[RMDB]
RNA sequence: GGGAACGACUCGAGUAGAGUCGAAAAUGCUUAAUAAGGGUAUGCAACUUUUGCAUACAAAGGUCUCCUGGGCUGGUUCUAAAAUCAUUGCUGUUAUCUACAGCGGCAGGGAGUCUCUAAUAUUCCCGAAUUAUACUACCUUCGGGUAGUAUAAUUCAAAAGAAACAACAACAACAAC
Reactivity to DMS in 0.01 (KOAc 150mM, MgCl2 10mM, bicine 150mM(pH8.5), 24C), signal-to-noise 4, nucleotides 027 to 126: u000g010c090u010u010a080a090u020a170a100g010g010g010u000a010u000g000c000a030a130c260u010u010u000u000g000c000a010u010a000c000a070a120a070g000g010u000c020u000c010c010u000g000g020g020c040u000g020g010u010u000c240u010a080a050a050a050u000c060a080u010u000g010c020u000g000u000u000a140u010c180u010a060c020a010g000c010g010g010c020a300g000g000g000a030g010u000c010u010c050u000a050a070u010a230u000u000c000c010c000
Reactivity to 2A3 in 0.01 (KOAc 150mM, MgCl2 10mM, bicine 150mM(pH8.5), 24C), signal-to-noise 4, nucleotides 027 to 126: u040g000c000u070u060a070a000u160a190a150g160g000g000u000a010u010g020c010a070a100c080u140u220u280u040g000c000a000u000a000c000a040a040a010g010g000u010c000u000c010c030u040g030g300g000c020u030g040g040u070u040c080u180a080a100a050a020u070c020a060u060u200g010c000u010g010u060u100a100u150c060u050a010c000a020g000c010g010g000c010a000g000g000g010a020g010u010c020u010c000u040a080a170u030a100u100u020c000c000c000
Record summary
This 177-nucleotide RNA was probed chemically with DMS and 2A3. For DMS the reverse transcriptase was MarathonRT. Conditions: 150 mM KOAc, 10 mM MgCl2 and 150 mM bicine (pH 8.5), 24 C. Source: RMDB library 15KREP, as collected in RNAgym. The 2A3 profile rests on 2,903 reads.